[RMDB]
RNA sequence: GGGAACGACUCGAGUAGAGUCGAAAAGGCGCUACCUUCGGGUAGCGCCAAAGAAGCCGGACGCAAAGAGCGAAAAAUGGAGGUAACCGGCAACCACGAAAAAAAGCUGUAACUUCGGUUACAGCAAGUAUAGUGUUGAGUUCGCUCAACACUAUACAAAAGAAACAACAACAACAAC
Reactivity to DMS in 0.01 (KOAc 150mM, MgCl2 10mM, bicine 150mM(pH8.5), 24C), signal-to-noise 2, nucleotides 027 to 126: g040g030c000g030c000u000a020c010c010u000u010c230g020g020g020u000a030g060c030g080c000c000a000a030a050g000a210a150g010c020c030g030g010a190c060g000c010a160a100a090g000a260g000c030g020a010a120a050a070a060u010g000g000a150g000g000u000a050a090c010c000g000g060c000a090a040c050c040a090c210g000a020a000a030a100a040a110a100g020c000u000g000u010a010a010c000u000u010c190g020g010u000u000a010c000a000g010c000a010a010
Reactivity to 2A3 in 0.01 (KOAc 150mM, MgCl2 10mM, bicine 150mM(pH8.5), 24C), signal-to-noise 1, nucleotides 027 to 126: g000g060c020g080c030u050a000c040c020u050u120c300g020g050g020u010a000g040c050g020c000c000a000a000a000g010a020a020g000c010c000g000g010a000c030g000c030a110a170a060g070a090g040c030g120a050a090a000a030a040u180g040g010a090g010g030u040a080a080c000c000g020g000c010a010a010c000c010a020c090g100a130a000a050a000a000a000a070g000c030u000g010u010a010a020c010u030u130c290g090g000u010u000a000c000a000g020c000a000a000